RNA sequence: GGGAACGACUCGAGUAGAGUCGAAAACUCGCGCGAACAUCGAGGCGUGGAGCGCGACAUGAAUCAGCCUCAAUUAGAUUAAUGGUCGACAGAUCAGCGGCGAUCAGCGACCGAAUUAGAAGCCGCCACCGGAAGAGGAGACGCUCGACGGACGUCAAAAUAAUCGCUAGUUCGCUAGCGAUUAUUUAAAAGAAACAACAACAACAAC
Reactivity to 2A3 in 0.01 (KOAc 150mM, MgCl2 10mM, bicine 150mM(pH8.5), 24C), signal-to-noise 2, nucleotides 027 to 156: c030u000c000g020c000g000c000g120a300a050c000a040u050c060g000a030g000g000c020g010u000g000g010a030g010c000g000c000g020a010c050a090u300g130a090a120u240c020a100g000c000c000u000c000a000a040u090u090a030g070a080u060u230a120a070u180g010g010u000c010g000a120c120a160g000a000u000c050a070g050c000g040g000c010g000a000u010c020a000g000c000g000a000c000c000g000a000a000u080u010a010g030a190a000g000c040c000g030c000c000a030c000c020g060g050a140a010g040a050g040g000a080g060a060c030g040c100u040c020g040a050c010g000g100a140c030g000u070c000a030
Reactivity to DMS in 0.01 (KOAc 150mM, MgCl2 10mM, bicine 150mM(pH8.5), 24C), signal-to-noise 2, nucleotides 027 to 156: c030u010c020g020c010g010c020g000a140a130c040a050u000c050g040a060g050g020c030g060u000g010g020a300g000c060g020c040g000a060c110a070u040g000a140a120u010c090a110g000c000c000u000c020a170a180u010u010a090g000a100u010u000a020a110u000g020g020u000c000g040a070c120a090g000a090u010c040a100g000c020g000g040c040g000a080u000c040a120g000c050g030a030c040c070g000a010a110u010u000a090g030a050a100g040c040c010g040c000c030a160c050c030g020g020a100a090g010a110g000g010a160g000a040c010g000c000u010c060g000a160c030g020g010a080c030g000u000c040a110
This 207-nucleotide RNA was probed chemically with 2A3 and DMS.
Source: RMDB library OK3TST, as collected in RNAgym.
2A3 is a SHAPE reagent: it acylates the 2'-hydroxyl of flexible nucleotides of all four kinds.
For DMS the reverse transcriptase was MarathonRT.
The reactions ran in a buffer of 150 mM KOAc, 10 mM MgCl2 and 150 mM bicine (pH 8.5), at 24 C.